[RMDB]
RNA sequence: GGGAACGACUCGAGUAGAGUCGAAAAUAAAGUAGUACAAAAGACUACUUUAGUAACUAGUCUUUUGUACUAGUUACAGCCUUAGGUACGGUGGACAUGCGAAAGCAUGUCCAUCGUACUUAAGGCAGCACGUAGUACGGUUCGCCGUACUACGUGCAAAAGAAACAACAACAACAAC
Reactivity to DMS in 0.01 (KOAc 150mM, MgCl2 10mM, bicine 150mM(pH8.5), 24C), signal-to-noise 1, nucleotides 027 to 126: u010a030a080a060g000u000a010g010u010a020c020a040a070a070a070g010a000c000u000a000c080u010u000u010a150g000u000a100a080c140u000a000g000u000c000u000u000u000u010g020u000a020c000u000a020g000u020u000a070c140a100g000c000c000u000u000a020g000g000u000a000c000g000g000u000g040g010a020c040a010u010g030c000g000a160a090a290g020c000a000u000g000u000c000c000a000u000c000g000u000a000c000u000u000a000a000g000g020c020a010